[RMDB]
RNA sequence: GGGAACGACUCGAGUAGAGUCGAAAAGGUAAUGAGUUCGCUCAUUACCAAAGAAAGCGUGCUAGUCUGAGCGCACAGACUAGGACGGCGCAAAGAAAGAAAAAAGAACCUGGUUCGCCAGGUUCAAGGAUUUAUCUGAGUUCGCUCAGAUAAAUCCAAAAGAAACAACAACAACAAC
Reactivity to DMS in 0.01 (KOAc 150mM, MgCl2 10mM, bicine 150mM(pH8.5), 24C), signal-to-noise 1, nucleotides 027 to 126: g000g020u000a000a000u000g020a010g030u020u010c260g010c000u000c020a000u000u000a000c000c000a040a020a030g000a090a050a150g000c010g030u000g020c000u000a010g000u000c010u010g010a100g020c220g000c110a070c020a030g000a010c010u010a010g000g040a030c030g000g020c080g010c100a100a060a080g000a090a110a050g000a000a070a070a070a140a120g000a000a000c000c000u010g000g000u000u020c250g000c000c000a000g010g000u000u000c000a020a060
Reactivity to 2A3 in 0.01 (KOAc 150mM, MgCl2 10mM, bicine 150mM(pH8.5), 24C), signal-to-noise 1, nucleotides 027 to 126: g020g000u000a000a030u010g000a000g010u020u080c140g040c060u000c000a000u000u000a000c000c010a000a020a000g010a010a040a000g060c000g030u030g100c010u000a000g030u000c000u000g060a050g170c080g060c060a050c000a100g010a000c000u000a010g020g040a030c050g090g000c090g000c080a090a090a030g150a090a190a010g080a020a210a100a010a010a070g000a010a000c000c010u000g010g050u040u060c120g070c060c000a000g000g010u010u000c010a000a000

This 177-nucleotide RNA was probed chemically with DMS and 2A3. It was measured as part of the RMDB library M2PK50. For DMS the reverse transcriptase was MarathonRT. For 2A3 the reverse transcriptase was SuperScript II with manganese. The reactions ran in a buffer of 150 mM KOAc, 10 mM MgCl2 and 150 mM bicine (pH 8.5), at 24 C.